Structure probing data (DMS and 2A3) for a 177-nucleotide construct. Reactivities are given for positions 27 through 126. The RNA was probed in 150 mM KOAc, 10 mM MgCl2 and 150 mM bicine (pH 8.5) at 24 C. For DMS, 1,803 sequencing reads were counted.
RNA sequence: GGGAACGACUCGAGUAGAGUCGAAAACGGCAUUGGUCGAUGGCGUGAAACAGCGGGUUCCAGUCGAACAUGGCCAGCAUGUAACCCGGCAAGGUAUUGGCAACGAACAUCUUGCCCGAGGCGAUCAAGAAGGCUCUCUAUUCGUAGAGAGCCUUCUAAAAGAAACAACAACAACAAC
Reactivity to DMS in 0.01 (KOAc 150mM, MgCl2 10mM, bicine 150mM(pH8.5), 24C), signal-to-noise 2, nucleotides 027 to 126: c050g030g010c020a100u020u020g000g030u000c020g010a170u040g000g010c030g000u000g000a100a040a010c140a200g000c190g000g000g010u000u010c050c000a120g010u040c070g020a060a040c120a030u020g000g030c040c040a110g000c120a070u000g000u040a120a060c000c040c010g000g000c000a020a020g020g010u000a080u000u000g000g000c180a030a110c220g000a040a050c110a040u000c000u000u000g000c040c060c110g000a030g010g000c010g000a030u000c190a170
Reactivity to 2A3 in 0.01 (KOAc 150mM, MgCl2 10mM, bicine 150mM(pH8.5), 24C), signal-to-noise 1, nucleotides 027 to 126: c050g020g000c000a000u050u080g060g000u030c040g040a000u010g020g020c070g020u000g040a110a000a120c110a050g060c000g010g000g010u110u030c010c050a010g080u040c100g140a000a000c020a010u000g050g000c030c000a020g000c000a000u050g000u130a140a120c000c000c000g010g000c000a000a000g000g060u180a110u050u070g030g050c020a120a060c180g080a070a010c010a030u030c000u000u000g000c000c120c000g010a090g010g080c060g020a060u060c020a000
The 2A3 profile rests on 778 reads.